Chemical mapping of a 177-nucleotide RNA with DMS and 2A3. The data come from the RNA Mapping Database (RMDB), library TTRDES.

RNA sequence: GGGAACGACUCGAGUAGAGUCGAAAAGAUAUGGAGACCGUCCACUCGCAACCCCGACCCAGGUCGGAAACGACCUGAAGGUCGUGGAACGGUCUCCUAAGUCAAAACGUCGGGUUCGCCCGACGAAUCUCAGGGUAAAGUUCGCUUUACCCUGAGAAAAAGAAACAACAACAACAAC
Reactivity to DMS in 0.01 (KOAc 150mM, MgCl2 10mM, bicine 150mM(pH8.5), 24C), signal-to-noise 2, nucleotides 027 to 126: g000a040u000a080u000g000g000a030g000a000c000c000g010u000c010c030a290c300u000c200g000c090a070a110c020c020c070c000g000a000c000c040c020a010g010g030u000c000g000g000a000a010a090c000g010a000c010c000u000g000a100a140g010g000u000c000g020u000g000g000a040a030c000g010g010u000c010u010c000c000u000a020a080g010u000c000a080a090a130a230c050g040u000c000g020g010g030u000u020c260g010c000c000c000g010a010c000g010a060a030
Reactivity to 2A3 in 0.01 (KOAc 150mM, MgCl2 10mM, bicine 150mM(pH8.5), 24C), signal-to-noise 1, nucleotides 027 to 126: g000a010u030a010u070g000g010a020g000a000c010c010g000u000c040c000a060c160u300c170g170c050a080a090c000c000c000c070g000a010c030c000c000a000g000g010u000c000g000g020a010a010a000c010g010a000c000c030u010g030a100a070g050g010u000c030g000u130g000g000a210a080c010g030g010u030c010u000c000c000u010a000a000g020u000c010a060a050a100a150c000g010u020c000g000g030g000u050u060c260g110c080c030c000g000a000c000g000a000a030
The DMS profile rests on 1,410 reads. For 2A3 the reverse transcriptase was SuperScript II with manganese. The RNA was probed in 150 mM KOAc, 10 mM MgCl2 and 150 mM bicine (pH 8.5) at 24 C.